[RMDB]
RNA sequence: GGGAACGACUCGAGUAGAGUCGAAAAAGCAGUAUCUAUGAUCAGGCACAUCCUUCCCUAUAUUGUUACAUGCCAUAUUCAUAGGCUUAUUCAAUUGUGUGUUUUGAGAAUUUUGUAUUAAUAGGGCUCGCCAUAGUAGAUUCGUCUACUAUGGCGAAAAAGAAACAACAACAACAAC
Reactivity to 2A3 in 0.01 (KOAc 150mM, MgCl2 10mM, bicine 150mM(pH8.5), 24C), signal-to-noise 2, nucleotides 027 to 126: a000g030c030a020g030u140a030u200c030u040a070u140g060a040u040c070a030g000g080c020a020c010a070u080c000c040u000u050c020c000c000u100a080u000a010u060u040g080u010u060a070c050a050u050g000c050c000a000u040a090u100u150c100a130u050a090g020g000c020u030u070a090u080u100c060a080a070u180u050g040u000g000u000g070u100u000u050u060g020a040g120a060a070u120u100u170u160g040u050a160u140u120a060a040u020a010g020g000g050c030
Reactivity to DMS in 0.01 (KOAc 150mM, MgCl2 10mM, bicine 150mM(pH8.5), 24C), signal-to-noise 3, nucleotides 027 to 126: a050g010c050a080g010u000a080u010c060u000a050u010g020a130u000c110a070g000g010c010a020c050a070u000c120c050u000u000c010c000c010u010a080u020a120u000u010g000u000u000a070c140a080u010g010c010c010a090u000a100u010u010c150a070u000a090g010g000c020u000u010a060u000u000c040a050a070u010u020g010u010g020u000g020u000u000u000u000g000a110g020a090a080u010u000u000u010g000u000a090u000u010a050a040u000a030g000g010g020c300
This 177-nucleotide RNA was probed chemically with 2A3 and DMS.
For DMS the reverse transcriptase was MarathonRT.
The 2A3 profile rests on 962 reads.
The DMS profile rests on 2,892 reads.
DMS (dimethyl sulfate) methylates the pairing face of unpaired adenines and cytosines.